[RMDB]
Chemical mapping of a 177-nucleotide RNA with DMS and 2A3.
For 2A3 the reverse transcriptase was SuperScript II with manganese.
The DMS profile rests on 1,633 reads.
The RNA was probed in 150 mM KOAc, 10 mM MgCl2 and 150 mM bicine (pH 8.5) at 24 C.
DMS adducts were read by reverse transcription with MarathonRT.
RNA sequence: GGGAACGACUCGAGUAGAGUCGAAAAGUCAAGCAGGACACUACCAGCCAGGAAGGGUUAGGAUGGCAGCAUAGUCUCAUGUUCCACAGCAGGCUCCCCAGAACACCUGAACCGUGGCCUCUGGAAGUCUCUGGAACGCAUUCGUGCGUUCCAGAGAAAAAGAAACAACAACAACAAC
Reactivity to DMS in 0.01 (KOAc 150mM, MgCl2 10mM, bicine 150mM(pH8.5), 24C), signal-to-noise 2, nucleotides 027 to 126: g030u000c030a080a120g020c060a020g000g000a030c080a020c060u010a020c060c030a100g060c030c030a080g020g010a150a080g000g040g000u020u000a040g000g000a150u000g000g000c120a030g020c030a030u000a030g010u050c060u040c080a180u070g000u000u000c000c000a080c080a060g020c000a060g000g010c050u000c080c060c030c170a080g000a030a090c100a020c060c010u000g080a050a120c270c230g000u000g010g010c100c010u000c020u010g020g010a040a060g000
Reactivity to 2A3 in 0.01 (KOAc 150mM, MgCl2 10mM, bicine 150mM(pH8.5), 24C), signal-to-noise 2, nucleotides 027 to 126: g050u040c050a080a000g040c040a080g050g030a020c000a000c020u080a040c000c000a000g000c020c030a080g000g080a050a080g080g000g030u020u080a070g030g020a040u040g000g000c040a010g020c080a110u090a030g050u000c030u010c050a020u130g010u040u000c050c050a020c000a020g110c010a000g030g000c000u050c020c010c010c000a020g020a110a030c010a000c000c030u050g050a110a030c050c050g020u040g050g030c020c020u040c020u010g040g010a060a120g000